RNA sequence: GGGAACGACUCGAGUAGAGUCGAAAAGAAGAACCUAAAAAAGCGGACCAACAAAUCCGUGGUGCUGUUGUAUUACCAAACGGUACUGGUAAAACUCAACGCGUAUUAGUAUUCGCAAAAGGUGAAAGCUACUCUUAGUAUUCGUACUGAGAGUAGCAAAAGAAACAACAACAACAAC
Reactivity to DMS in 0.01 (KOAc 150mM, MgCl2 10mM, bicine 150mM(pH8.5), 24C), signal-to-noise 8, nucleotides 027 to 126: g010a140a130g010a180a140c040c010u010a000a070a090a100a160a150g010c020g000g000a020c110c060a080a100c160a080a060a300u000c020c010g020u000g010g010u000g010c150u000g000u000u000g010u000a190u000u000a020c020c010a020a090a070c100g000g010u000a050c060u000g010g010u000a010a020a060a050c080u010c050a030a060c080g000c080g010u000a100u010u000a030g000u000a300u000u000c000g010c040a050a050a080a070g010g020u000g000a080a100a080
Reactivity to 2A3 in 0.01 (KOAc 150mM, MgCl2 10mM, bicine 150mM(pH8.5), 24C), signal-to-noise 7, nucleotides 027 to 126: g080a040a020g030a060a060c020c030u120a170a140a040a000a010a000g010c000g000g030a020c040c030a090a100c150a050a300a010u010c020c010g020u010g030g030u040g010c060u030g020u070u020g050u030a100u040u050a020c020c000a080a090a000c090g130g040u100a060c060u020g000g000u020a030a060a030a050c060u060c050a030a050c040g000c010g030u010a000u010u010a020g050u010a050u040u160c040g000c040a020a060a080a050g040g020u060g060a100a040a010